[RMDB]
RNA sequence: GGGAACGACUCGAGUAGAGUCGAAAAGUGCACGACUUCGGUCGUGCACAAAUAAAGGCAGUCGAGUGCGUACGGCACAGUCAUACGGUGACGCCACGACAAAAAGUAACGUCUUCGGACGUUACAACGAUCUGAUAAUGUUCGCAUUAUCAGAUCGAAAAGAAACAACAACAACAAC
Reactivity to DMS in 0.01 (KOAc 150mM, MgCl2 10mM, bicine 150mM(pH8.5), 24C), signal-to-noise 5, nucleotides 027 to 126: g010u000g010c000a000c000g010a000c000u010u030c210g060g020u000c000g010u000g000c010a000c000a000a040a050u010a080a130a120g000g010c070a100g020u000c020g010a100g010u010g010c020g010u000a080c170g020g020c030a060c080a090g010u000c070a100u000a140c120g010g010u000g000a040c030g000c010c010a100c040g020a030c040a050a040a080a080a090g020u000a010a010c010g000u000c000u000u010c140g020g000a010c000g000u000u000a000c000a060a090
Reactivity to 2A3 in 0.01 (KOAc 150mM, MgCl2 10mM, bicine 150mM(pH8.5), 24C), signal-to-noise 6, nucleotides 027 to 126: g010u010g000c010a000c000g020a010c040u050u120c240g040g000u000c000g020u010g010c000a000c000a000a010a000u020a000a010a010g060g000c050a020g020u030c020g060a020g050u120g050c010g030u090a100c080g090g000c040a020c030a100g040u050c010a040u070a170c160g170g040u060g020a010c010g000c030c030a050c040g060a020c040a020a140a010a010a010g010u000a000a010c000g010u000c000u030u050c180g080g000a000c000g000u000u010a000c000a000a020
This 177-nucleotide RNA was probed chemically with DMS and 2A3. DMS (dimethyl sulfate) methylates the pairing face of unpaired adenines and cytosines. Conditions: 150 mM KOAc, 10 mM MgCl2 and 150 mM bicine (pH 8.5), 24 C.